[RMDB]
RNA sequence: GGGAACGACUCGAGUAGAGUCGAAAAACAAGCUGUACCUCAAGGAUGGGAGAUCCAUUGUGGUCCCUUGCCGCCACCAAGAUGAACUGAUUGGCCGAGCUCGCGUCUCACCAGGGGCAGGAUGGAGGGACGGGUUCAACUUCGGUUGAACCCGUCCAAAAGAAACAACAACAACAAC
Reactivity to 2A3 in 0.01 (KOAc 150mM, MgCl2 10mM, bicine 150mM(pH8.5), 24C), signal-to-noise 1, nucleotides 027 to 126: a010c140a050a000g000c050u050g000u060a010c000c000u000c030a000a100g050g000a100u130g000g010g060a240g050a150u000c060c000a090u120u250g010u020g060g000u040c040c000c000u000u020g020c000c050g060c020c000a000c000c000a000a000g130a050u020g010a090a030c040u030g070a190u160u100g000g000c020c030g000a000g010c070u060c100g110c060g100u040c030u090c030a000c000c010a020g000g000g000g010c000a000g050g080a070u020g000g030a060g140